An RNA of 177 nucleotides, treated with DMS and 2A3 and read out base by base.

[RMDB]
RNA sequence: GGGAACGACUCGAGUAGAGUCGAAAAAUGCGCUUCCAAUAGUAGAAGGACGUUAAGCAUUUAUCAUUGAACUAUAAUUGUUCAUUGAAGUCAUUGAUGCAAACUCCUUGGUCACACACACAUACGGGUUUUUUGCCUAAUUCGUUAGGCAAAAAACAAAAGAAACAACAACAACAAC
Reactivity to DMS in 0.01 (KOAc 150mM, MgCl2 10mM, bicine 150mM(pH8.5), 24C), signal-to-noise 3, nucleotides 027 to 126: a140u000g000c050g020c050u000u010c000c030a150a090u020a130g030u000a110g010a060a040g000g010a070c170g000u000u010a050a190g000c000a030u000u000u040a070u000c010a030u060u010g010a030a000c000u010a180u060a140a080u060u000g000u000u000c010a000u000u020g010a020a090g000u020c280a160u020u050g000a010u000g010c010a050a070a040c010u000c010c000u010u000g000g010u000c050a070c040a040c080a070c160a050c070a040u010a070c120g010g000
Reactivity to 2A3 in 0.01 (KOAc 150mM, MgCl2 10mM, bicine 150mM(pH8.5), 24C), signal-to-noise 5, nucleotides 027 to 126: a000u100g030c050g000c010u050u060c000c000a080a120u080a090g140u010a020g020a090a010g050g010a010c120g030u010u050a160a060g000c000a000u010u030u100a090u020c000a000u000u000g000a010a000c020u030a010u110a300a230u230u140g000u000u000c010a000u000u010g030a060a020g050u130c070a100u100u200g000a000u010g010c000a050a010a030c000u000c000c000u020u020g070g050u050c010a050c000a000c000a000c000a000c000a040u080a090c040g040g080

Reactivities are given for positions 27 through 126.